[RMDB]
RNA sequence: GGGAACGACUCGAGUAGAGUCGAAAACACGUGUGCGAGGGGAACUGACGAGUACAUCAAACCCCGAACAAGCUCGGUUCGCAAGGGCGGCCGCCCCUUUCGGAUAAGCUAAGCCACGUCGGAUCACCCCUAUUCGCGCAUUCGUGCGCGAAUAGGGAAAAGAAACAACAACAACAAC
Reactivity to DMS in 0.01 (KOAc 150mM, MgCl2 10mM, bicine 150mM(pH8.5), 24C), signal-to-noise 1, nucleotides 027 to 126: c030a050c000g010u000g010u000g050c000g000a070g000g000g020g000a070a260c230u000g000a000c120g000a300g060u020a140c140a150u000c000a070a040a300c000c000c010c000g020a060a140c300a070a090g000c090u000c060g060g120u010u000c000g040c070a020a000g000g000g000c020g000g050c300c210g000c160c000c000c000u000u000u000c000g020g000a000u000a180a020g000c040u000a090a060g000c100c000a000c000g000u000c020g000g000a070u060c030a170c090
Reactivity to 2A3 in 0.01 (KOAc 150mM, MgCl2 10mM, bicine 150mM(pH8.5), 24C), signal-to-noise 2, nucleotides 027 to 126: c010a000c000g010u010g030u120g000c010g030a120g000g020g010g000a040a020c010u050g000a050c040g060a070g110u130a060c030a010u000c020a030a010a190c020c000c000c000g020a020a000c030a020a010g000c000u050c140g240g000u020u010c010g030c060a010a010g000g000g000c060g030g090c130c090g040c000c010c000c000u000u010u020c020g040g010a020u000a010a000g000c000u010a000a000g000c000c000a010c000g010u030c060g020g060a020u090c040a120c010
An RNA of 177 nucleotides, treated with DMS and 2A3 and read out base by base. For 2A3 the reverse transcriptase was SuperScript II with manganese. The reactions ran in a buffer of 150 mM KOAc, 10 mM MgCl2 and 150 mM bicine (pH 8.5), at 24 C.